Structure probing data (2A3 and DMS) for a 177-nucleotide construct. For 2A3, 1,354 sequencing reads were counted. For DMS the reverse transcriptase was MarathonRT. The RNA was probed in 150 mM KOAc, 10 mM MgCl2 and 150 mM bicine (pH 8.5) at 24 C. 2A3 adducts were read by reverse transcription with SuperScript II with manganese.
[RMDB]
RNA sequence: GGGAACGACUCGAGUAGAGUCGAAAAUCAGAGUUUUGAGUCGUCAGACUACGAGCAGUUUCUCUUAGUCGUUGCAUCGGGUGCUGUUGCCUUAAGCAUGUGUAUAUGGGGUUCGGGGGCUGUUGCCAAGAUUAACGUGGUUCGCCACGUUAAUCUUAAAAGAAACAACAACAACAAC
Reactivity to 2A3 in 0.01 (KOAc 150mM, MgCl2 10mM, bicine 150mM(pH8.5), 24C), signal-to-noise 3, nucleotides 027 to 126: u100c040a050g040a030g080u070u050u140u110g060a070g030u050c040g010u040c050a020g010a130c020u070a050c040g040a010g030c050a060g010u020u150u100c070u000c000u020u100a000g030u030c030g060u090u060g010c030a040u050c030g000g000g030u090g000c040u050g030u070u060g010c000c010u060u040a030a030g060c020a110u030g090u010g050u060a010u010a090u270g040g000g000g020u030u120c020g000g000g030g000g020c020u000g020u050u030g020c010c020
Reactivity to DMS in 0.01 (KOAc 150mM, MgCl2 10mM, bicine 150mM(pH8.5), 24C), signal-to-noise 5, nucleotides 027 to 126: u030c090a080g010a150g030u010u000u010u020g010a060g010u010c000g020u020c110a140g000a060c030u010a080c070g010a050g020c300a100g000u020u010u010c020u010c040u010u010a060g010u010c010g010u010u000g020c070a060u020c060g010g000g010u000g000c020u000g000u020u000g010c050c030u020u000a100a110g000c050a050u000g020u000g010u010a060u000a060u010g010g000g000g010u000u020c060g020g000g010g010g020c020u000g000u010u000g000c080c100